Structure probing data (DMS and 2A3) for a 177-nucleotide construct. Source: RMDB library OK2TST, as collected in RNAgym. As a SHAPE reagent, 2A3 marks flexible, mostly unpaired nucleotides at the ribose 2'-OH. The DMS profile rests on 3,605 reads. In probing experiments dimethyl sulfate is read out at A N1 and C N3, which are open when not base-paired.
[RMDB]
RNA sequence: GGGAACGACUCGAGUAGAGUCGAAAAACACAAGUUCUUUAGUGCAGAACUAGAGAAGUUGACCAAUGAAAGUGCUUUGCUGAUUGCCUCUGAAUUGCUCUCUCUCUCACUAACUCUGAUGUCAUUAGGGAUUUAUUUUAUUCGUAAAAUAAAUCCCAAAAGAAACAACAACAACAAC
Reactivity to DMS in 0.01 (KOAc 150mM, MgCl2 10mM, bicine 150mM(pH8.5), 24C), signal-to-noise 4, nucleotides 027 to 126: a090c210a220c040a060a020g000u010u010c010u000u000u000a000g010u000g010c300a090g000a140a040c000u000a010g000a010g010a010a020g020u000u000g000a240c050c030a090a100u000g010a110a070a110g010u000g020c040u000u000u000g020c050u000g010a110u010u000g000c030c030u000c050u010g010a080a080u000u000g010c020u000c030u000c050u000c030u000c030u000c030a060c070u010a040a110c070u000c050u000g000a110u000g000u000c060a070u000u010a180
Reactivity to 2A3 in 0.01 (KOAc 150mM, MgCl2 10mM, bicine 150mM(pH8.5), 24C), signal-to-noise 3, nucleotides 027 to 126: a000c040a010c010a030a070g060u020u020c000u030u030u040a010g000u010g060c050a020g050a300a020c000u000a010g000a000g000a040a020g020u020u030g030a030c040c000a030a090u120g110a160a040a010g020u040g050c070u170u100u070g010c050u070g050a130u030u060g030c000c000u060c020u070g070a090a090u080u090g010c000u000c000u000c000u010c000u010c010u000c010a030c050u090a100a010c010u030c030u120g050a060u140g100u100c030a060u190u300a070